[RMDB]
RNA sequence: GGGAACGACUCGAGUAGAGUCGAAAACAUAGGGAGUUCGCUCCCUAUGAAAAUGCCGGCUGCAAGAAUAGUGCUUCAAAGAGUGGGAGCACUGCCGAAAAAAAAGGGCGAUGUUCGCAUCGCCCAAUCUAACUAGCAACUUCGGUUGCUAGUUAGAAAAAGAAACAACAACAACAAC
Reactivity to DMS in 0.01 (KOAc 150mM, MgCl2 10mM, bicine 150mM(pH8.5), 24C), signal-to-noise 1, nucleotides 027 to 126: c000a000u010a000g010g000g000a000g060u000u050c250g020c000u000c000c000c000u010a000u000g000a010a050a050a080u010g010c060c020g020g040c050u020g000c110a080a110g010a110a090u010a040g020u000g010c000u010u000c010a070a070a170g010a120g020u010g000g000g000a000g010c000a010c010u000g030c030c030g000a000a000a010a040a080a050a070a140g000g020g010c000g000a010u010g000u010u020c180g020c010a000u000c000g020c000c010c000a010a000
Reactivity to 2A3 in 0.01 (KOAc 150mM, MgCl2 10mM, bicine 150mM(pH8.5), 24C), signal-to-noise 2, nucleotides 027 to 126: c000a000u010a000g020g020g010a010g000u050u060c110g060c050u000c000c000c000u010a010u000g010a000a010a000a010u050g050c010c020g040g000c030u050g000c030a070a000g020a160a070u110a130g030u000g030c010u000u010c020a110a240a100g150a140g090u170g040g000g010a000g030c000a000c010u000g000c000c020g060a140a020a000a000a000a010a000a040g000g000g000c000g000a010u010g030u030u080c170g000c070a000u000c000g000c000c000c000a000a000
Structure probing data (DMS and 2A3) for a 177-nucleotide construct. Reactivities are given for positions 27 through 126. Conditions: 150 mM KOAc, 10 mM MgCl2 and 150 mM bicine (pH 8.5), 24 C. DMS adducts were read by reverse transcription with MarathonRT. The 2A3 profile rests on 2,366 reads.